Conditions: 150 mM KOAc, 10 mM MgCl2 and 150 mM bicine (pH 8.5), 24 C. The record gives the reactivity of an RNA of 177 nucleotides to 2A3 and DMS. DMS adducts were read by reverse transcription with MarathonRT. The DMS profile rests on 1,614 reads. For 2A3, 1,467 sequencing reads were counted. The data come from the RNA Mapping Database (RMDB), library M2PK90.
RNA sequence: GGGAACGACUCGAGUAGAGUCGAAAAGAAGAUGAUGUGUAGGAUAGGAGGGAGGCUUUGAAGUGUGGACGCCAGUCUGCAUGGAGCCGACCUUGAAAUACCACCCUUUAAUGAAAAACAAAUACAACUAAGUAUGUCGUUUCGACGACAUACUUAGAAAAGAAACAACAACAACAAC
Reactivity to 2A3 in 0.01 (KOAc 150mM, MgCl2 10mM, bicine 150mM(pH8.5), 24C), signal-to-noise 2, nucleotides 027 to 126: g090a030a030g110a070u070g040a050u060g110u020g010u060a080g040g030a100u060a080g180g000a000g020g010g010a020g000g000c000u300u110u030g100a050a050g020u000g000u020g050g000a000c020g050c080c010a010g010u000c020u020g000c000a000u020g010g010a000g000c010c000g030a030c010c000u010u010g020a000a050a000u080a020c000c000a000c060c000c030u120u060u100a200a080u160g110a110a060a010a010a010c080a050a110a010u170a120c050a070a000
Reactivity to DMS in 0.01 (KOAc 150mM, MgCl2 10mM, bicine 150mM(pH8.5), 24C), signal-to-noise 3, nucleotides 027 to 126: g000a040a060g020a080u010g010a050u000g020u020g010u000a050g000g010a170u000a080g010g040a020g000g000g020a300g010g010c030u000u000u020g010a120a120g040u000g020u010g000g000a020c010g030c210c270a060g000u000c020u020g010c010a000u000g000g010a010g020c020c010g000a100c010c020u010u020g000a050a100a060u010a050c030c010a050c020c010c000u010u000u000a080a110u000g000a040a070a040a080a040c160a050a050a070u000a070c170a080a160